[RMDB]
RNA sequence: GGGAACGACUCGAGUAGAGUCGAAAAGGGAGGUUGACUCCCCGGCGCCAACAGGCCCUGGCCCAACUAGGCGCUCAUCGAAUGAACACACAAGAGAAUGAAUGUAAGGUCAGCUGGUGGGACAGUGCAGUGAUGAGUAGUUCGCUACUCAUUAUUGAAAAGAAACAACAACAACAAC
Reactivity to 2A3 in 0.01 (KOAc 150mM, MgCl2 10mM, bicine 150mM(pH8.5), 24C), signal-to-noise 2, nucleotides 027 to 126: g010g020g000a020g020g030u240u210g110a160c010u010c000c000c000c010g010g010c020g020c010c000a070a090c010a070g000g030c000c000c050u080g090g000c000c000c000a080a170c080u190a120g020g000c000g000c000u000c050a100u060c000g000a060a170u160g070a130a030c070a000c040a010c030a160a030g040a010g050a150a040u120g030a060a010u080g040u130a070a000g040g000u010c020a010g020c020u020g000g010u010g010g010g020a010c010a020g010u020g050
Reactivity to DMS in 0.01 (KOAc 150mM, MgCl2 10mM, bicine 150mM(pH8.5), 24C), signal-to-noise 2, nucleotides 027 to 126: g000g000g000a000g010g010u020u040g010a250c020u000c020c000c000c080g000g020c150g020c030c020a110a090c130a130g010g000c010c030c040u010g010g000c000c000c000a250a270c270u000a300g000g000c000g000c000u000c070a090u000c020g000a300a300u010g000a050a070c110a080c150a050c100a050a030g000a040g000a030a030u000g000a050a020u010g010u000a050a060g000g010u000c000a040g010c010u000g000g020u010g010g000g010a060c050a050g000u000g000